[RMDB]
An RNA of 177 nucleotides, treated with 2A3 and DMS and read out base by base.
Values cover nucleotides 27 to 126.
The RNA was probed in 150 mM KOAc, 10 mM MgCl2 and 150 mM bicine (pH 8.5) at 24 C.
RNA sequence: GGGAACGACUCGAGUAGAGUCGAAAAAGUUCCGCUGUGGGUUCGCCUACAAGAACGUACGGUGUUGAGGCCCUGUCCGCUGCUGCGCUGCCACCUACUCUUCGCGCCGCUAGUCGAGCGGACUCCGCAUAUGAAUAGCGUUCGCGCUAUUCAUAUGAAAAGAAACAACAACAACAAC
Reactivity to 2A3 in 0.01 (KOAc 150mM, MgCl2 10mM, bicine 150mM(pH8.5), 24C), signal-to-noise 6, nucleotides 027 to 126: a000g030u030u010c010c010g030c050u030g020u040g030g040g000u020u080c150g050c040c000u040a040c030a050a070g020a060a010c040g110u130a020c060g020g000u040g020u080u130g070a070g040g050c010c020c030u040g020u010c010c020g030c030u040g000c010u020g000c030g010c040u040g050c010c010a060c010c020u090a120c040u050c060u170u140c040g010c020g000c050c010g010c040u050a030g060u100c090g080a000g000c000g000g020a010c010u010c010c020g010
Reactivity to DMS in 0.01 (KOAc 150mM, MgCl2 10mM, bicine 150mM(pH8.5), 24C), signal-to-noise 9, nucleotides 027 to 126: a140g000u000u000c010c020g010c060u000g010u000g010g000g010u000u010c110g020c060c030u010a050c090a060a090g000a050a030c040g010u000a110c090g010g010u000g000u000u010g010a100g000g000c030c020c020u010g010u000c030c030g010c020u000g000c030u000g010c030g010c050u000g010c040c070a090c110c050u000a070c090u010c060u000u000c140g010c060g010c160c030g010c020u000a040g010u000c090g000a050g020c010g000g000a040c030u000c080c080g000